[RMDB]
Record summary
Chemical mapping of a 177-nucleotide RNA with DMS and 2A3. Conditions: 150 mM KOAc, 10 mM MgCl2 and 150 mM bicine (pH 8.5), 24 C. For 2A3 the reverse transcriptase was SuperScript II with manganese. Reactivities are given for positions 27 through 126. For 2A3, 2,193 sequencing reads were counted.
RNA sequence: GGGAACGACUCGAGUAGAGUCGAAAAGUUAUGGAAAACGUCUUACCUACCACUACAACAACAAUGCUGGACGGUGAUGGUUCGACUUACUCGAAACCAUCACGUAGUGGUAGUCGUUCCCAUUCAAACUUUCCCGUUCAUUCGUGAACGGGAAAGUAAAAGAAACAACAACAACAAC
Reactivity to DMS in 0.01 (KOAc 150mM, MgCl2 10mM, bicine 150mM(pH8.5), 24C), signal-to-noise 2, nucleotides 027 to 126: g020u050u020a070u010g000g000a050a090a070a050c060g010u000c030u010u000a110c160c000u000a010c000c010a000c010u000a010c020a030a100c130a020a060c300a150a080u040g030c070u010g010g000a140c040g000g010u000g000a000u000g000g020u000u020c000g020a050c300u010u010a060c210u000c000g020a030a030a010c000c010a010u000c000a010c030g040u010a000g040u000g010g000u000a000g000u020c010g060u000u000c000c000c010a140u030u030c140a070a130
Reactivity to 2A3 in 0.01 (KOAc 150mM, MgCl2 10mM, bicine 150mM(pH8.5), 24C), signal-to-noise 2, nucleotides 027 to 126: g070u060u110a100u280g110g000a020a090a030a020c030g030u000c030u040u030a060c000c010u040a000c000c000a000c010u000a000c020a160a010c010a060a010c020a130a290u180g060c040u090g160g140a090c100g080g000u010g000a010u010g000g040u000u000c010g000a040c060u090u170a090c020u050c030g020a090a030a050c010c000a000u010c000a000c020g010u010a000g000u000g030g010u010a000g000u000c000g000u000u020c000c020c010a010u090u110c040a020a000